This 177-nucleotide RNA was probed chemically with DMS and 2A3. It was measured as part of the RMDB library OK2TST. Values cover nucleotides 27 to 126. The 2A3 profile rests on 1,986 reads. The DMS profile rests on 2,711 reads. 2A3 adducts were read by reverse transcription with SuperScript II with manganese.

RNA sequence: GGGAACGACUCGAGUAGAGUCGAAAACUGGCUAACCGCUUCGACAAGCUAUUGUUGUUCCUGAACAACAAUAGCGGACACAUGGUGAGCAAAGACGAUGAAGAGAGCGGCAUGAUCAAGCACGGCACCAGGGAGUAGUAUUCGUACUACUCCCUGGAAAAGAAACAACAACAACAAC
Reactivity to DMS in 0.01 (KOAc 150mM, MgCl2 10mM, bicine 150mM(pH8.5), 24C), signal-to-noise 3, nucleotides 027 to 126: c050u000g010g010c050u000a160a040c030c050g010c080u000u070c080g010a090c080a240a170g000c000u000a000u000u000g000u000u010g000u000u000c110c190u010g000a020a000c000a020a020c000a010a000u010a000g010c000g000g020a130c290a100c130a030u000g010g040u010g020a090g000c040a070a070a090g010a050c090g010a080u000g000a060a090g000a100g000a060g020c040g000g050c010a030u000g000a060u000c060a070a080g010c090a080c050g010g000c130a160
Reactivity to 2A3 in 0.01 (KOAc 150mM, MgCl2 10mM, bicine 150mM(pH8.5), 24C), signal-to-noise 2, nucleotides 027 to 126: c000u020g040g000c010u020a070a000c030c010g060c050u110u080c070g060a030c020a060a040g000c000u020a000u020u000g010u020u000g020u020u070c050c120u250g140a000a000c000a000a010c000a010a020u000a020g000c030g010g000a020c020a000c000a040u090g060g030u070g040a020g020c050a130a070a000g100a020c100g040a050u060g070a080a040g110a020g020a010g000c030g030g000c040a030u070g030a100u090c050a050a010g020c010a050c070g130g000c020a000